[RMDB]
RNA sequence: GGGAACGACUCGAGUAGAGUCGAAAACUUGAAAGAUGAAAAAACGCAAAGACUGGCCUCACAGGUAGUACGAAAAUGGCUUAAUGCUUCAGUCCUUCGGGCAAUGAAGCCCUUCGAAGCUCGCAAGGAGGAUAUGUCAUUUCGAUGACAUAUCCUCAAAAGAAACAACAACAACAAC
Reactivity to 2A3 in 0.01 (KOAc 150mM, MgCl2 10mM, bicine 150mM(pH8.5), 24C), signal-to-noise 4, nucleotides 027 to 126: c030u050u050g050a100a120a080g120a070u150g060a080a020a030a040a020a020c060g000c040a060a050a000g050a070c030u070g080g020c000c010u040c010a070c010a020g000g100u070a010g000u030a040c030g070a100a000a040a010u070g010g000c010u060u100a070a010u170g020c020u010u010c030a030g010u090c040c020u050u150c050g050g000g020c010a000a070u110g030a080a000g040c000c010c010u010u040c040g040a030a000g010c050u030c040g090c050a030a010g130
Reactivity to DMS in 0.01 (KOAc 150mM, MgCl2 10mM, bicine 150mM(pH8.5), 24C), signal-to-noise 4, nucleotides 027 to 126: c010u020u010g010a040a110a100g000a090u010g010a000a030a070a040a080a090c070g000c070a080a080a060g010a050c020u010g000g010c030c010u000c060a070c100a090g000g010u020a040g020u010a070c050g000a030a020a060a050u030g000g020c020u000u000a060a060u000g010c010u010u010c030a050g000u010c040c020u010u020c100g010g020g010c060a100a080u020g010a040a050g000c020c040c050u000u020c050g010a040a100g020c050u010c080g020c180a080a050g000

Structure probing data (2A3 and DMS) for a 177-nucleotide construct. The RNA was probed in 150 mM KOAc, 10 mM MgCl2 and 150 mM bicine (pH 8.5) at 24 C. Source: RMDB libraries RFM100 and RFMREP, as collected in RNAgym. DMS adducts were read by reverse transcription with MarathonRT.